RNA sequence: GGGAACGACUCGAGUAGAGUCGAAAAAUGAUCGGGAGGCGAUUCUUUUGGUUUUUGGUUCCUAAAAGAGUUUGUAUUUGAGCCGAAUAGGAAAGAGAGUCCUGUCUGAGGGUGAACCUCUUUCCGAAAUUUUAUACACAGACUACACACGUAGAGGGGUAAGGGAAUAGUUCGCUAUUCCCUUACCAAAAGAAACAACAACAACAAC
Reactivity to DMS in 0.01 (KOAc 150mM, MgCl2 10mM, bicine 150mM(pH8.5), 24C), signal-to-noise 1, nucleotides 027 to 156: a040u000g000a060u000c030g020g010g030a050g150g000c020g040a020u000u000c030u030u000u000u000g010g000u000u000u000u000u000g020g000u000u000c030c020u010a030a060a050a130g010a060g010u000u010u010g050u010a130u000u010u000g000a090g020c020c030g010a090a090u000a170g030g010a020a030a040g010a030g000a120g010u000c000c010u000g080u000c120u000g010a240g030g010g020u010g000a030a050c000c000u000c010u000u000u000c010c000g000a050a000a080u040u010u000u010a110u000a120c050a110c040a160g000a080c020u000a090c070a090c060a040c110g050u000a030g000a180g020g020
Reactivity to 2A3 in 0.01 (KOAc 150mM, MgCl2 10mM, bicine 150mM(pH8.5), 24C), signal-to-noise 1, nucleotides 027 to 156: a000u070g010a020u080c020g010g030g040a020g050g020c020g020a000u050u030c000u000u070u020u050g000g010u010u050u010u050u140g090g000u090u130c020c020u050a040a040a010a010g010a010g000u040u170u240g150u240a150u100u260u150g000a000g060c010c000g030a020a030u030a020g000g000a000a000a000g000a000g000a040g030u000c000c000u040g010u100c090u110g120a290g020g000g020u020g020a000a000c000c020u000c000u040u000u000c000c000g000a000a000a000u020u020u010u010a000u020a000c000a000c000a000g010a020c030u110a050c100a000c020a010c150g100u080a080g010a110g100g110

Chemical mapping of a 207-nucleotide RNA with DMS and 2A3. Reactivities are given for positions 27 through 156. Conditions: 150 mM KOAc, 10 mM MgCl2 and 150 mM bicine (pH 8.5), 24 C. For DMS the reverse transcriptase was MarathonRT.